Chemical mapping of a 207-nucleotide RNA with DMS and 2A3. 2A3 adducts were read by reverse transcription with SuperScript II with manganese.
[RMDB]
RNA sequence: GGGAACGACUCGAGUAGAGUCGAAAACUGCCGCCGGGAAGCAGUGAUCCUCGCAGGGUCGCACGGUCGCCUCGGGUCGGCCUCGUGUCGGCUCGACCUGCGAGGGGAGCGAGUGGCGAGCCCGACCAAAACUUUCUCGCCUUCGGGCGAGAAAGAACAUAAGCAACAAGUUCGCUUGUUGCUUAUGAAAAGAAACAACAACAACAAC
Reactivity to DMS in 0.01 (KOAc 150mM, MgCl2 10mM, bicine 150mM(pH8.5), 24C), signal-to-noise 1, nucleotides 027 to 156: c030u000g030c030c010g020c030c010g000g010g080a220a220g020c020a230g000u010g000a080u000c070c000u000c010g010c030a060g020g010g000u000c060g000c040a120c040g000g000u010c020g000c070c040u010c020g010g000g010u000c020g040g010c020c020u000c180g000u000g070u000c020g040g000c000u000c000g040a030c000c000u000g010c000g000a060g010g000g000g000a050g000c000g000a150g010u040g010g010c010g000a100g050c010c030c010g040a070c080c000a050a080a120a180c010u000u000u000c000u000c000g000c000c000u010u020c280g040g010g030c020g000a000g020a000a010a010g010a150a170
Reactivity to 2A3 in 0.01 (KOAc 150mM, MgCl2 10mM, bicine 150mM(pH8.5), 24C), signal-to-noise 3, nucleotides 027 to 156: c010u020g000c010c000g010c010c010g030g020g040a140a020g030c040a160g210u000g010a000u000c000c000u000c000g000c000a000g030g030g040u180c080g000c100a070c080g050g010u010c010g010c000c040u020c000g010g000g000u010c000g000g010c000c020u120c120g300u300g010u010c000g000g010c010u020c010g030a070c010c000u000g000c000g000a010g000g000g010g000a010g000c000g000a080g050u010g000g000c000g010a050g000c030c030c010g020a010c000c030a040a070a000a020c000u000u010u010c000u000c000g000c010c020u030u070c210g060g010g000c000g000a000g000a000a000a000g000a020a000